The record gives the reactivity of an RNA of 207 nucleotides to 2A3. For 2A3 the reverse transcriptase was SuperScript II with manganese. The data come from the RNA Mapping Database (RMDB), library ARCHII. The reactions ran in a buffer of 150 mM KOAc, 10 mM MgCl2 and 150 mM bicine (pH 8.5), at 24 C. As a SHAPE reagent, 2A3 marks flexible, mostly unpaired nucleotides at the ribose 2'-OH. Values are in units of 0.01, from 0 to 300, in steps of 10.
RNA sequence: GGGAACGACUCGAGUAGAGUCGAAAACAGACAAAAAUACGGUGGCCGCUCGCGUCCCUCCUCAUGUCGAGUCGCUCCUCCGAGGAUGCAGUUCACAGACUAAACGGCGAUGGGCUUGGUGGCCUCCGUCGAGGUAAGCCGAGCUUAAGAUAUAGUCCGAGAUUGUAAACUUCGGUUUACAAUCUCGAAAAGAAACAACAACAACAAC
Reactivity to 2A3 in 0.01 (KOAc 150mM, MgCl2 10mM, bicine 150mM(pH8.5), 24C), signal-to-noise 1, nucleotides 027 to 156: c070a010g220a000c090a050a040a040a040a070u210a170c080g000g000u010g050g000c040c040g070c050u120c120g060c160g050u060c000c010c010u040c000c000u020c040a070u160g140u150c040g010a010g020u040c000g040c000u010c000c000u000c010c070g010a010g050g050a020u090g070c090a060g010u050u060c060a060c040a080g000a010c010u110a150a080a030c020g000g010c060g000a020u240g000g000g040c010u040u060g000g010u000g090g000c010c000u000c000c000g020u050c080g000a010g010g010u140a120a000g010c000c000g000a020g040c000u070u080a100a000g020a000u080a040u060a170g060u020c070